[RMDB]
RNA sequence: GGGAACGACUCGAGUAGAGUCGAAAAGGGACGUUGGCAACGACGACCCAGUGCCGGAAAGUUCGUCAAACUUGGUCAUUUAGAGGAAGAAAAAGUCGUAACAAGGUUUCCGUAGGUGAACCUGCGGCUAUCAUGGGGGCUUCGGCCCCCAUGAUAGAAAAGAAACAACAACAACAAC
Reactivity to DMS in 0.01 (KOAc 150mM, MgCl2 10mM, bicine 150mM(pH8.5), 24C), signal-to-noise 2, nucleotides 027 to 126: g000g000g000a050c040g000u010u000g000g020c200a160a090c030g020a010c000g030a040c020c000c030a030g020u030g050c040c000g020g000a100a040a030g010u000u000c090g000u000c070a120a010a170c100u010u000g040g030u000c020a040u010u000u000a030g010a120g000g010a090a040g010a100a050a060a120a050g010u010c030g020u020a170a120c220a090a050g010g010u000u010u060c000c000g010u010a010g010g000u040g030a050a080c000c000u000g040c030g000g000
Reactivity to 2A3 in 0.01 (KOAc 150mM, MgCl2 10mM, bicine 150mM(pH8.5), 24C), signal-to-noise 2, nucleotides 027 to 126: g030g030g010a050c020g090u090u060g010g080c060a110a000c000g060a000c000g050a060c000c010c000a050g010u060g020c000c000g010g000a260a060a000g110u060u160c060g020u070c140a040a070a160c070u020u050g030g030u060c010a110u010u060u080a050g020a020g090g090a020a020g150a020a050a120a000a000g120u090c010g010u100a110a070c010a110a030g060g000u040u040u000c000c010g000u000a000g050g010u070g150a130a190c000c000u000g040c000g020g000

Conditions: 150 mM KOAc, 10 mM MgCl2 and 150 mM bicine (pH 8.5), 24 C. This 177-nucleotide RNA was probed chemically with DMS and 2A3. Reactivities are rounded to 0.1 and cut off at 0 and 3. For DMS, 2,223 sequencing reads were counted.